[RMDB]
RNA sequence: GGGAACGACUCGAGUAGAGUCGAAAAGUAGAGUGUAUCAUGUCAGUAAGCAUGCCGGGGAAUGGUGGUUUACCCCGUUUUCAAAUGAUUACCGACCAAUAAUUGGCGAAACUCGUUUCGCGUUGGCAAAGUCACGGCGUGUUCGCACGCCGUGAAACUCCAAGGCAUAGUUCGCUAUGCCUUGGAGAAAAGAAACAACAACAACAAC
Reactivity to DMS in 0.01 (KOAc 150mM, MgCl2 10mM, bicine 150mM(pH8.5), 24C), signal-to-noise 1, nucleotides 027 to 156: g010u010a110g000a150g030u010g030u020a040u000c040a130u010g020u010c040a030g000u000a030a060g010c030a040u000g010c290c100g020g010g010g010a020a020u010g030g020u000g000g010u000u000u010a300c000c000c000c000g030u010u000u000u010c100a030a040a020u000g010a130u000u000a030c000c020g050a010c030c060a080a010u000a110a160u010u000g010g030c030g010a130a100a090c020u000c120g080u000u000u000c020g060c110g030u000u000g030g000c020a030a030a130g010u000c000a030c000g010g000c010g040u000g030u010u000c300g000c020a020c000g000c010c010g000u030g000a010a010a030
Reactivity to 2A3 in 0.01 (KOAc 150mM, MgCl2 10mM, bicine 150mM(pH8.5), 24C), signal-to-noise 2, nucleotides 027 to 156: g150u160a020g030a040g070u140g030u080a060u180c050a030u110g030u040c040a010g090u100a070a020g000c020a010u040g040c030c010g000g000g010g020a040a010u050g060g000u020g020g070u030u050u170a120c000c010c000c010g030u050u040u030u070c070a070a080a000u060g000a020u050u080a030c030c060g040a050c040c020a030a030u170a120a060u090u100g090g000c010g010a020a030a030c070u050c080g010u010u010u000c000g000c020g030u040u050g030g000c070a080a060a030g080u020c000a000c020g020g000c010g020u030g000u000u020c010g030c040a000c000g000c030c000g020u010g000a000a000a000